Chemical mapping of a 177-nucleotide RNA with 2A3 and DMS.
2A3 adducts were read by reverse transcription with SuperScript II with manganese.
The RNA was probed in 150 mM KOAc, 10 mM MgCl2 and 150 mM bicine (pH 8.5) at 24 C.
RNA sequence: GGGAACGACUCGAGUAGAGUCGAAAAAUGGUCUCGCCGUGCGGAUCGCAUACAGCAACGCGCGUGCGCAAGGCGAGAUGCGCCUGGGCGACGCAUGGCGCGUGAAGCCGAGCGACGCGUUGCUCGAUAGCGGAAAAUGAUUCGUCAUUUUCCGCUAAAAAGAAACAACAACAACAAC
Reactivity to 2A3 in 0.01 (KOAc 150mM, MgCl2 10mM, bicine 150mM(pH8.5), 24C), signal-to-noise 2, nucleotides 027 to 126: a000u130g020g020u030c030u040c080g030c040c050g070u110g030c000g050g040a090u070c020g000c040a070u170a200c030a030g000c020a040a010c030g020c000g020c070g050u110g110c000g000c000a020a000g000g000c010g010a050g000a060u030g000c000g000c000c010u050g010g050g030c130g030a070c050g040c190a090u180g040g000c000g010c010g000u060g040a030a000g020c030c010g000a000g010c020g010a010c000g000c000g010u010u010g000c030u000c020g120a070
Reactivity to DMS in 0.01 (KOAc 150mM, MgCl2 10mM, bicine 150mM(pH8.5), 24C), signal-to-noise 4, nucleotides 027 to 126: a080u010g020g000u000c010u000c030g030c070c080g000u000g020c020g000g000a040u000c050g020c110a110u000a090c210a090g000c080a050a020c060g010c020g010c110g020u000g010c000g010c020a030a160g000g010c000g010a100g010a000u000g010c000g010c000c010u010g010g000g000c060g010a080c080g000c010a100u000g010g020c010g000c000g030u010g000a110a300g000c070c000g010a300g000c000g000a080c050g010c010g010u000u000g000c000u000c040g010a120